RNA sequence: GGGAACGACUCGAGUAGAGUCGAAAACAUUUUAACGCGUGUGCACUCUCUAACACGAAUUACCCAGUUAUUUUCGACUUUACUCGACUCGUUAUAGCGUGCGUUGAGAGAGUUGGCCGCGAUUGAACUAGUAAAGAGACUUCGGUCUCUUUACUAGAAAAGAAACAACAACAACAAC
Reactivity to DMS in 0.01 (KOAc 150mM, MgCl2 10mM, bicine 150mM(pH8.5), 24C), signal-to-noise 4, nucleotides 027 to 126: c260a100u000u000u000u010a030a030c230g000c010g020u000g020u010g020c090a070c020u000c020u000c020u010a090a040c020a020c010g000a090a090u010u010a080c060c050c050a090g010u000u000a060u000u010u000u000c000g000a010c000u000u010u000a000c010u000c000g000a010c050u000c000g020u000u000a040u000a080g010c020g020u010g010c050g010u000u000g010a040g010a070g000a050g010u000u010g010g000c020c010g010c030g000a100u010u010g010a070a170
Reactivity to 2A3 in 0.01 (KOAc 150mM, MgCl2 10mM, bicine 150mM(pH8.5), 24C), signal-to-noise 1, nucleotides 027 to 126: c010a090u090u140u100u190a060a040c030g000c010g040u060g000u040g050c070a010c080u060c000u000c020u050a050a010c000a000c020g010a050a050u120u110a090c000c040c060a040g050u090u090a080u030u010u020u000c000g000a000c010u000u060u000a020c000u020c000g010a010c000u000c000g030u000u070a110u080a050g000c010g020u080g040c040g050u080u190g020a010g000a010g000a060g030u080u090g070g020c020c020g000c040g020a020u020u180g030a090a060